[RMDB]
RNA sequence: GGGAACGACUCGAGUAGAGUCGAAAAAUGAACGGAGCAAGGAUGAGGUGCACAGCUGCCAUCGCACCAAGGAGGUAUGAAAUCGACCUCCCAUCCGAACGACUGCCGACCGUGGCCGCGACUGGGACCCCAACAACAAUUUAUGAGGGGAAUGCUGUCUACGUUCGUAAUUCGUUACGAACGUAGAAAAAGAAACAACAACAACAAC
Reactivity to 2A3 in 0.01 (KOAc 150mM, MgCl2 10mM, bicine 150mM(pH8.5), 24C), signal-to-noise 3, nucleotides 027 to 156: a000u100g030a040a010c040g040g010a060g010c060a120a040g030g000a000u010g010a020g080g010u010g000c030a000c020a080g070c020u130g010c020c010a080u070c040g010c020a020c020c000a020a060g010g020a000g000g000u030a080u230g120a050a070a120u170c080g000a020c000c000u000c000c000c000a010u000c000c010g000a030a010c030g090a050c030u040g060c010c020g030a020c000c020g010u070g010g010c000c010g010c030g030a040c070u070g030g000g030a040c020c020c050c000a000a050c020a020a040c050a060a080u080u260u090a100u250g020a070g020g000g000g090a000a040u140g010c030u040g030
Reactivity to DMS in 0.01 (KOAc 150mM, MgCl2 10mM, bicine 150mM(pH8.5), 24C), signal-to-noise 2, nucleotides 027 to 156: a080u010g010a090a030c050g060g020a080g020c090a080a150g020g000a010u000g000a180g020g090u000g020c000a090c050a100g000c090u000g000c030c060a060u000c030g010c020a080c030c030a210a140g010g020a050g040g000u010a110u000g000a000a090a110u010c010g000a040c000c000u010c000c000c000a010u000c040c000g000a080a070c020g010a100c030u000g040c040c000g020a140c090c040g050u000g030g010c010c000g010c000g040a150c050u000g000g000g000a160c040c030c010c000a050a100c070a050a120c010a030a120u010u010u020a050u040g010a190g030g010g020g020a120a040u010g080c020u000g020
An RNA of 207 nucleotides, treated with 2A3 and DMS and read out base by base. For DMS the reverse transcriptase was MarathonRT. Values are in units of 0.01, from 0 to 300, in steps of 10. Conditions: 150 mM KOAc, 10 mM MgCl2 and 150 mM bicine (pH 8.5), 24 C. For 2A3, 1,596 sequencing reads were counted. The data come from the RNA Mapping Database (RMDB), library OK3TST.